Source: RMDB libraries RFM100 and RFMREP, as collected in RNAgym. An RNA of 177 nucleotides, treated with 2A3 and DMS and read out base by base. The RNA was probed in 150 mM KOAc, 10 mM MgCl2 and 150 mM bicine (pH 8.5) at 24 C. 2A3 adducts were read by reverse transcription with SuperScript II with manganese.
[RMDB]
RNA sequence: GGGAACGACUCGAGUAGAGUCGAAAAAGCAGACAACAGGGAAACAGGUUAAUAUUCCUGUGCCAGUGUGCACUCAAAGCUGACGCUUUGGGGCCGCCUCUGCUGGGUUUUCGCCCAGUUGAACAGUUCCACUAGUGAUUUUCGAAUCACUAGUGGAAAAAGAAACAACAACAACAAC
Reactivity to 2A3 in 0.01 (KOAc 150mM, MgCl2 10mM, bicine 150mM(pH8.5), 24C), signal-to-noise 4, nucleotides 027 to 126: a010g060c060a050g050a090c050a110a040c060a110g010g000g080a180a190a000c000a010g040g000u090u100a140a050u080a140u160u140c000c000u000g010u010g020c020c010a030g030u040g060u140g060c030a120c130u010c000a020a000a000g010c050u180g110a050c160g010c030u000u000u010g000g000g000g000c010c020g000c000c010u030c000u010g000c000u000g010g010g000u060u160u030u150c040g000c000c000c000a010g000u030u060g030a060a040c020a030g000u000
Reactivity to DMS in 0.01 (KOAc 150mM, MgCl2 10mM, bicine 150mM(pH8.5), 24C), signal-to-noise 3, nucleotides 027 to 126: a020g010c040a020g000a080c140a160a030c100a140g010g010g000a060a080a040c020a010g000g020u000u010a040a100u030a230u020u010c010c000u000g000u000g030c050c010a150g000u000g000u030g000c030a090c000u010c000a000a010a020g010c000u020g030a140c300g010c000u010u020u000g020g000g000g000c080c040g000c000c110u010c020u010g000c000u000g010g000g050u040u000u030u010c210g010c010c000c010a110g000u000u000g000a080a080c180a030g000u000